[RMDB]
RNA sequence: GGGAACGACUCGAGUAGAGUCGAAAAAUAUUGGUCCCACAAAAUGCAUGUAAUGCUUUGAGUGCACAGCCUGGGGAGGGACUUGUUUGGGGUCUAUGACAGUUACUGCCUAUAGGUUAAGUUUGUCAACAUUGAAGAGUUUCGACUCUUCAAUGUUAAAAGAAACAACAACAACAAC
Reactivity to DMS in 0.01 (KOAc 150mM, MgCl2 10mM, bicine 150mM(pH8.5), 24C), signal-to-noise 8, nucleotides 027 to 126: a090u010a120u010u010g010g010u010c010c010c010a160c170a060a060a080a070u000g010c030a010u000g010u020a090a080u000g010c050u000u000u000g000a170g020u000g010c060a050c100a090g010c030c030u010g010g010g010g000a090g010g000g010a050c070u000u000g010u000u000u000g010g010g010g010u000c070u000a060u010g000a030c030a040g010u000u000a060c040u000g000c010c010u000a100u010a050g010g010u000u000a060a090g010u000u000u000g010u000c120
Reactivity to 2A3 in 0.01 (KOAc 150mM, MgCl2 10mM, bicine 150mM(pH8.5), 24C), signal-to-noise 3, nucleotides 027 to 126: a000u200a100u060u110g100g010u030c000c020c010a000c010a000a060a020a010u110g010c020a000u080g050u300a180a040u060g070c000u060u070u110g080a080g020u060g010c060a020c030a140g000c010c020u030g000g000g000g020a040g010g020g060a020c010u090u090g080u070u040u070g070g010g000g010u060c080u060a070u130g050a030c020a030g010u080u030a030c010u050g050c000c020u180a180u100a200g030g000u040u050a050a020g000u030u060u090g080u040c050
Source: RMDB library OK2TST, as collected in RNAgym.
This 177-nucleotide RNA was probed chemically with DMS and 2A3.
Values cover nucleotides 27 to 126.
2A3 adducts were read by reverse transcription with SuperScript II with manganese.